Notes: The record gives the reactivity of an RNA of 177 nucleotides to DMS and 2A3. Conditions: 150 mM KOAc, 10 mM MgCl2 and 150 mM bicine (pH 8.5), 24 C. Source: RMDB library OK2TRN, as collected in RNAgym. The 2A3 profile rests on 4,286 reads. Reactivities are given for positions 27 through 126. For 2A3 the reverse transcriptase was SuperScript II with manganese.

[RMDB]
RNA sequence: GGGAACGACUCGAGUAGAGUCGAAAAAGAGAGGGUGUUGGAGGGACAGAAAGGACCCUGGAGUCAUUGUGCGAGCACUGGGUGGAGCAGUGAAGCCCCACCCAGGCCUCAGGAGCUCCCCUGGGUGCCUUAAGAUGGGUUUCGACCCAUCUUAAGGAAAAGAAACAACAACAACAAC
Reactivity to DMS in 0.01 (KOAc 150mM, MgCl2 10mM, bicine 150mM(pH8.5), 24C), signal-to-noise 3, nucleotides 027 to 126: a100g010a080g000a080g010g000g010u000g010u000u000g000g020a120g010g000g010a140c120a060g010a040a080a080g010g010a060c050c020c020u000g010g010a050g010u010c050a100u010u010g020u010g020c120g000a080g010c060a090c020u000g000g020g040u010g000g010a020g020c000a170g000u010g020a150a170g010c010c010c010c020a010c010c000c010a010g000g000c090c020u000c020a030g010g010a170g000c040u010c020c010c280c100u010g000g000g010u000g010
Reactivity to 2A3 in 0.01 (KOAc 150mM, MgCl2 10mM, bicine 150mM(pH8.5), 24C), signal-to-noise 4, nucleotides 027 to 126: a010g100a010g000a030g020g020g030u080g020u150u080g030g060a070g040g010g000a010c020a050g130a080a090a010g050g030a040c010c010c010u030g030g000a020g030u040c020a080u070u130g040u070g100c110g090a110g050c060a060c300u000g010g000g020u010g000g000a020g030c030a040g050u110g230a100a040g020c020c000c000c010a000c000c000c000a000g010g000c010c000u010c000a000g030g020a030g020c010u030c010c020c020c030u030g010g000g030u040g060